[RMDB]
RNA sequence: GGGAACGACUCGAGUAGAGUCGAAAAGGGCUGUGGAAAGAAUGAACAGCUACUGAGUAUAUGUGCAAUGUGCUGUUACACAGCUUAGUGGCUGAUGUCUUAAUUGGCAAGAAUUCUUGACUCCUCUGCCAGAAAAUCUCUAACACACACUCACCUAACCCCGUAUCGAUUUCGAUCGAUACGGGGUAAAAGAAACAACAACAACAAC
Reactivity to 2A3 in 0.01 (KOAc 150mM, MgCl2 10mM, bicine 150mM(pH8.5), 24C), signal-to-noise 2, nucleotides 027 to 156: g060g000g000c040u030g030u040g050g060a010a100a000g030a000a170u090g010a170a040c000a010g000c000u020a000c000u010g020a000g030u050a130u020a150u280g010u030g040c070a050a100u050g090u150g200c170u080g000u050u060a010c000a000c000a000g000c020u000u000a010g000u030g020g020c000u000g030a130u110g070u040c000u020u070a290a190u210u070g020g000c010a010a090g040a060a000u120u020c030u020u100g090a110c030u030c000c000u070c000u060g000c000c030a010g080a000a070a030a050u090c060u080c090u300a250a000c000a000c000a000c000a010c150u050c000a060c030c070u110a100